Background:
The record gives the reactivity of an RNA of 177 nucleotides to DMS.
RNA sequence: GGGAACGACUCGAGUAGAGUCGAAAAAGAGCCCGUUAAUGGGUAAUGGCGUGCCUUUUGUAGAAUGAACCGGCGAGUUACGAUUUCAUGCAAGGUUAAGUUGAGAAGACGGAGCCGCAGCGAAAGCCUACCUCUGAGCAUUCGUGCUCAGAGGUAGAAAAGAAACAACAACAACAAC
Reactivity to DMS in 0.01 (KOAc 150mM, MgCl2 10mM, bicine 150mM(pH8.5), 24C), signal-to-noise 1, nucleotides 027 to 126: a060g010a300g020c040c050c010g020u000u010a070a080u000g050g000g030u010a040a070u000g000g010c070g010u000g000c000c020u000u020u000u000g010u010a070g020a090a130u010g010a100a070c070c020g040g000c040g000a080g030u000u010a160c070g000a150u000u000u010c090a080u010g020c070a000a040g010g000u000u040a070a080g020u000u010g010a190g010a050a130g000a070c030g020g050a120g010c070c070g030c070a090g000c040g000a060a040a100g010c130

The data come from the RNA Mapping Database (RMDB), library OK2TRN. For DMS, 620 sequencing reads were counted.